[RMDB]
RNA sequence: GGGAACGACUCGAGUAGAGUCGAAAAAGCAGACUGGUUUCUGGGUGCGCUUUGCCUGUCGUGCUGCCCGGCGACGAGACCUAACGGCCAGGAUAAGCAUGUAGGGCCGGGGAUGGAGUACUUUCGGACGGCGGUUCGAUUCCGCCCACCUCCACCACAAUAGGAUAAAGUUCGCUUUAUCCUAUUGAAAAGAAACAACAACAACAAC
Reactivity to 2A3 in 0.01 (KOAc 150mM, MgCl2 10mM, bicine 150mM(pH8.5), 24C), signal-to-noise 4, nucleotides 027 to 156: a000g040c050a020g030a090c030u070g000g030u040u060u080c030u040g010g020g020u090g020c070g010c060u030u070u090g010c010c000u050g050u080c030g030u020g020c020u050g010c020c000c000g000g010c010g040a170c030g040a040g080a120c030c040u060a110a040c050g020g010c010c000a010g030g010a090u080a150a000g020c040a040u140g010u060a060g000g000g000c010c040g020g010g000g010a050u060g010g000a030g010u120a140c110u100u200u160c090g100g050a070c040g010g020c010g010g000u000u070c010g010a020u080u020c010c000g000c000c000c000a040c000c010u030c000c010a020c000c010a050
Reactivity to DMS in 0.01 (KOAc 150mM, MgCl2 10mM, bicine 150mM(pH8.5), 24C), signal-to-noise 2, nucleotides 027 to 156: a070g010c010a020g010a070c020u000g000g010u000u000u010c020u010g020g020g050u010g000c060g030c050u000u000u000g030c020c010u000g050u000c080g040u000g030c020u000g000c020c020c020g030g020c000g010a160c060g000a190g010a070c060c050u000a080a140c080g010g010c010c030a170g010g020a090u010a070a140g000c030a050u000g000u010a160g000g010g030c030c050g030g030g030g020a080u000g010g000a050g020u010a070c040u000u000u010c050g010g010a070c040g020g020c060g020g030u000u010c110g000a300u000u010c020c010g050c000c000c020a040c050c000u000c000c000a090c040c030a180